[RMDB]
RNA sequence: GGGAACGACUCGAGUAGAGUCGAAAAUGCUACACCGACUACACGUAAUUACCGGUGUAGCUAAGGUAGUUACGACAACUGAUCCGAGAGGAUCUACAUUAAGGCGAAGGUGAAAUAUAGGUUAAUAGGCACCUGAAGCCGACCCUAUUAACCAACAACGGACGUGAUAUUUCGAUAUCACGUCCGUAAAAGAAACAACAACAACAAC
Reactivity to 2A3 in 0.01 (KOAc 150mM, MgCl2 10mM, bicine 150mM(pH8.5), 24C), signal-to-noise 1, nucleotides 027 to 156: u060g000c000u000a000c000a010c020c000g090a040c060u210a060c090a030c200g300u260a230a170u160u170a070c010c010g040g000u000g000u000a010g000c000u000a020a020g010g000u030a020g010u080u150a040c130g040a000c100a090a070c090u110g020a000u030c000c000g030a020g000a020g060g020a000u000c010u060a040c060a050u050u080a010a080g030g020c000g020a030a030g020g000u020g080a030a100a050u300a150u270a240g010g000u000u000a000a000u000a000g000g000c000a000c000c020u020g030a030a000g000c000c000g010a000c020c020c000u010a010u000u000a000a000c010c000a010a010c040a000

Structure probing data (2A3) for a 207-nucleotide construct. Source: RMDB library OK3TST, as collected in RNAgym. For 2A3, 467 sequencing reads were counted. For 2A3 the reverse transcriptase was SuperScript II with manganese.